RNA sequence: GGGAACGACUCGAGUAGAGUCGAAAACCGGAAUGGUUCCGCCGUGAUCGGGCCAUGCAAUAGUUGCCAACGACAACUAUGUUCCGGUUGCUCAGGCAGCGUAACGCUGCUUGAAAGACCACAUGAAUUAGCGCGACAUUGUUCGCAAUGUCGCGAACAAUGACACGUGGUUCGCCACGUGUCAUUGAAAAGAAACAACAACAACAAC
Reactivity to DMS in 0.01 (KOAc 150mM, MgCl2 10mM, bicine 150mM(pH8.5), 24C), signal-to-noise 2, nucleotides 027 to 156: c010c010g000g010a070a060u000g010g020u000u000c000c000g030c040c100g010u000g050a080u000c010g010g000g040c000c010a030u020g000c110a100a020u000a000g020u000u000g000c000c000a160a210c290g000a120c000a000a020c000u000a010u000g010u010u010c000c010g020g010u000u000g020c140u000c020a030g010g010c000a040g020c000g000u000a080a140c170g050c010u000g000c000u000u000g020a060a040a120g010a270c000c000a090c080a120u010g000a130a220u010u000a130g010c000g010c000g000a020c020a020u000u000g000u010u000c300g040c000a030a040u000g020u000c000g010c000g030a020a110
Reactivity to 2A3 in 0.01 (KOAc 150mM, MgCl2 10mM, bicine 150mM(pH8.5), 24C), signal-to-noise 4, nucleotides 027 to 156: c030c000g020g020a040a020u060g000g020u300u300c010c020g000c040c120g280u230g040a260u100c000g020g010g000c010c010a010u070g040c010a100a050u010a000g000u000u000g000c020c090a130a110c220g060a100c000a000a000c020u000a000u010g050u140u020c010c010g000g000u010u010g010c000u010c020a010g000g000c000a010g000c000g070u120a130a020c250g000c000u010g000c000u000u000g000a000a000a000g020a030c050c020a070c030a180u250g160a150a120u130u090a140g120c000g000c010g000a000c000a000u000u020g010u060u080c110g000c070a010a010u000g000u000c000g000c010g010a010a010
An RNA of 207 nucleotides, treated with DMS and 2A3 and read out base by base.
The 2A3 profile rests on 2,781 reads.
The reactions ran in a buffer of 150 mM KOAc, 10 mM MgCl2 and 150 mM bicine (pH 8.5), at 24 C.